[RMDB]
Source: RMDB library OK2TRN, as collected in RNAgym. An RNA of 177 nucleotides, treated with 2A3 and DMS and read out base by base. For DMS the reverse transcriptase was MarathonRT. 2A3 adducts were read by reverse transcription with SuperScript II with manganese. For 2A3, 2,945 sequencing reads were counted.

RNA sequence: GGGAACGACUCGAGUAGAGUCGAAAACUUGAGGGGUAGGGGUACGAGGUGGAGGGCUGGCAGGAUCUCGAGCACUGGGUGUGGUGCCAGCACUGUCUUAACUCUUGCCUCCUCCCCGCUCUGGAACCAAAGGAUGAUACUUCGGUAUCAUCCUUUGAAAAGAAACAACAACAACAAC
Reactivity to 2A3 in 0.01 (KOAc 150mM, MgCl2 10mM, bicine 150mM(pH8.5), 24C), signal-to-noise 3, nucleotides 027 to 126: c050u090u120g080a070g040g050g000g010u150a250g010g040g030g000u040a050c060g020a010g010g000u040g030g020a010g020g010g000c050u020g030g000c000a010g010g030a140u060c020u050c160g070a120g030c020a030c100u110g110g090g170u260g140u170g140g010u000g030c010c000a000g030c020a030c010u030g030u040c000u000u060a050a040c000u000c000u050u170g000c000c000u030c010c000u010c000c000c000c000g000c010u040c020u030g080g090a050a070c030
Reactivity to DMS in 0.01 (KOAc 150mM, MgCl2 10mM, bicine 150mM(pH8.5), 24C), signal-to-noise 3, nucleotides 027 to 126: c070u020u000g010a110g020g010g000g010u000a060g040g000g020g020u000a050c120g000a030g020g040u010g000g000a080g010g000g010c090u000g000g010c010a020g020g000a080u000c020u000c100g030a170g010c120a050c120u020g030g010g020u010g010u000g000g020u000g000c000c010a030g020c300a110c010u000g000u010c000u000u000a110a150c010u010c000u000u000g010c020c000u000c010c040u000c030c010c000c010g000c030u000c030u000g000g000a130a100c190